[RMDB]
RNA sequence: GGGAACGACUCGAGUAGAGUCGAAAAAAACUUAAAUGUGGACAAUAUUAAACAGAGGUACUUAUCUCUUGAAAAAGAGCCAUUAAUUCCUUCUACAGACAUCGAUCAAGGUCCUGAAGAAUUCCUAAACCCUCCUGAUGAUGAAGAUGUUAAAGAGUGCUGCAUUAUUAUUCGUAAUAAUGCAGCAAAAAGAAACAACAACAACAAC
Reactivity to DMS in 0.01 (KOAc 150mM, MgCl2 10mM, bicine 150mM(pH8.5), 24C), signal-to-noise 1, nucleotides 027 to 156: a030a040a030c020u000u010a060a010a050u010g010u000g000g000a100c020a110a140u000a120u000u000a100a060a080c100a100g000a040g010g000u010a060c060u000u000a060u010c030u000c030u000u000g010a080a100a090a080a060g000a110g010c080c040a080u000u000a010a120u010u000c010c000u000u000c040u000a130c100a060g000a030c030a080u000c030g000a070u000c010a060a050g010g000u000c030c010u000g020a040a050g010a050a120u000u000c010c010u000a020a050a100c060c010c020u000c010c040u030g020a070u000g000a060u000g000a060a020g030a060u000g000u000u000a050a040a070g000a150g000

The data come from the RNA Mapping Database (RMDB), library OK3TST. The record gives the reactivity of an RNA of 207 nucleotides to DMS. The RNA was probed in 150 mM KOAc, 10 mM MgCl2 and 150 mM bicine (pH 8.5) at 24 C. Values cover nucleotides 27 to 156.